[RMDB]
RNA sequence: GGGAACGACUCGAGUAGAGUCGAAAACUUUGAGGCUCUCAAGGUGCCUCGAGGGGAUUCCUGGUUCGUCAUCCCCACCAUCAUCUUUUUCCAGCAGCAAGCCACGCAGCCCUCUCUCGCUCGGGCUUUCCGCUCCGCACCUUUUACUCUCCGAACAGUAUCCUCUGCUAUUCGUAGCAGAGGAUACAAAAGAAACAACAACAACAAC
Reactivity to 2A3 in 0.01 (KOAc 150mM, MgCl2 10mM, bicine 150mM(pH8.5), 24C), signal-to-noise 1, nucleotides 027 to 156: c000u030u030u080g000a000g000g030c010u010c030u060c160a140a090g120g000u020g030c000c000u000c000g000a010g000g000g020g010a030u040u030c000c000u030g020g050u030u090c050g050u020c040a060u060c010c050c000c000a030c030c020a030u080c020a020u060c030u040u060u090u110u040c080c020a010g020c010a000g020c010a060a050g030c040c010a070c070g050c040a020g040c010c020c000u100c000u020c020u070c090g040c020u030c000g000g030g000c000u020u020u010c020c000g020c000u010c000c010g020c000a050c000c020u010u060u110u170a070c040u100c030u080c070c060g100a080a030c010a020
Structure probing data (2A3) for a 207-nucleotide construct. Values cover nucleotides 27 to 156. For 2A3, 1,204 sequencing reads were counted.